[RMDB]
RNA sequence: GGGAACGACUCGAGUAGAGUCGAAAAUUUGGAGUAAGUACAAUAAUACAAUUCUCUUCUCCUAUACUAAGUAUGGUAUAUCCAGCAACUAUAACUCUAGUUAUACUAGCAUUAUUUAGUAAUAAAAAAUAUCCAGCUAUUUCGAUAGCUGGAUAUUAAAAGAAACAACAACAACAAC
Reactivity to DMS in 0.01 (KOAc 150mM, MgCl2 10mM, bicine 150mM(pH8.5), 24C), signal-to-noise 1, nucleotides 027 to 126: u000u110u010g000g000a100g010u020a130a240g000u000a020c090a050a050u000a100a170u050a030c070a030a200u040u130c030u000c030u010u030c010u000c030c000u000a040u000a000c000u000a000a040g000u000a000u000g010g000u000a080u000a010u000c010c030a100g000c100a010a150c300u000a010u000a000a010c040u130c110u070a090g050u000u000a040u090a000c010u090a300g010c000a070u050u000a030u000u000u000a050g000u080a030a150u140a040a080a050a120
Reactivity to 2A3 in 0.01 (KOAc 150mM, MgCl2 10mM, bicine 150mM(pH8.5), 24C), signal-to-noise 4, nucleotides 027 to 126: u140u070u160g030g000a000g020u120a100a050g070u060a050c100a130a110u200a230a020u090a100c070a060a090u160u040c030u000c000u120u040c010u020c000c000u060a060u000a070c000u010a050a000g050u010a060u110g020g040u090a100u010a020u200c040c030a010g030c040a040a100c080u090a080u090a190a040c030u010c060u120a080g010u010u050a050u010a070c010u010a030g050c020a070u060u050a000u010u140u030a000g000u000a000a210u090a150a190a060a030
Chemical mapping of a 177-nucleotide RNA with DMS and 2A3. It was measured as part of the RMDB library OK1LIB. For DMS, 1,073 sequencing reads were counted. The reactions ran in a buffer of 150 mM KOAc, 10 mM MgCl2 and 150 mM bicine (pH 8.5), at 24 C.